An RNA of 177 nucleotides, treated with 2A3 and DMS and read out base by base. For 2A3, 964 sequencing reads were counted. The reactions ran in a buffer of 150 mM KOAc, 10 mM MgCl2 and 150 mM bicine (pH 8.5), at 24 C.
[RMDB]
RNA sequence: GGGAACGACUCGAGUAGAGUCGAAAAGAAAAUACGUGUACGAUUUGCAGUGCAUUCUUUGAGUACACGGAAAGAAAACUAGAGGAAAGAAAAACUGUGAAUCGCGAAAAAGAAACUCUAGGAAAAAGGCUAAGUUAAACUUCGGUUUAACUUAGCCAAAAGAAACAACAACAACAAC
Reactivity to 2A3 in 0.01 (KOAc 150mM, MgCl2 10mM, bicine 150mM(pH8.5), 24C), signal-to-noise 1, nucleotides 027 to 126: g130a000a150a020a000u140a060c000g000u000g000u000a030c000g010a020u000u000u010g000c000a000g020u030g020c040a140u040u110c030u100u150u090g010a020g000u000a000c000a000c000g000g020a000a100a010g060a020a170a000a020c000u000a000g010a000g000g130a070a040a030g040a020a080a010a000a000c000u030g000u010g070a030a070u080c070g000c060g220a000a230a000a000a000g010a050a110a000c000u000c000u000a000g000g070a000a000a190a000a000
Reactivity to DMS in 0.01 (KOAc 150mM, MgCl2 10mM, bicine 150mM(pH8.5), 24C), signal-to-noise 1, nucleotides 027 to 126: g000a120a120a300a060u000a100c000g010u000g000u010a000c000g000a090u000u000u000g000c020a000g010u000g070c260a060u040u000c060u000u000u000g000a220g000u000a000c000a000c060g000g000a070a100a060g000a080a120a140a110c000u000a000g000a000g000g020a140a110a050g000a040a060a010a040a070c040u060g000u030g000a080a010u010c050g020c160g040a000a100a190a100a080g010a120a200a110c000u000c000u000a010g020g000a020a050a070a110a090